An RNA of 177 nucleotides, treated with 2A3 and read out base by base. The reactions ran in a buffer of 150 mM KOAc, 10 mM MgCl2 and 150 mM bicine (pH 8.5), at 24 C. The data come from the RNA Mapping Database (RMDB), library RFM100. The 2A3 profile rests on 626 reads.
RNA sequence: GGGAACGACUCGAGUAGAGUCGAAAAACUGAGCCUUACGAGGCUCAGAAUGGCCAGUUAAGUGAAUGCUUUGCCACAGUCUUAGAAAUUGAUUAAGCUGGGCUAAGGUUCACUUAGGCUGGACGAAUCCCAGGACAGGUUUCGACCUGUCCUGGGAAAAAGAAACAACAACAACAAC
Reactivity to 2A3 in 0.01 (KOAc 150mM, MgCl2 10mM, bicine 150mM(pH8.5), 24C), signal-to-noise 2, nucleotides 027 to 126: a070c000u000g000a000g000c000c000u070u010a160c300g070a030g000g000c000u010c000a000g030a030a020u120g060g000c000c000a020g010u070u110a000a000g000u000g040a000a010u110g250c000u000u030u030g040c000c020a190c030a200g100u070c010u000u040a010g170a170a300a260u240u220g110a130u010u010a000a000g000c000u000g000g000g010c000u000a010a000g000g010u000u000c000a000c000u000u000a000g000g000c000u000g020g000a020c110g040a000a040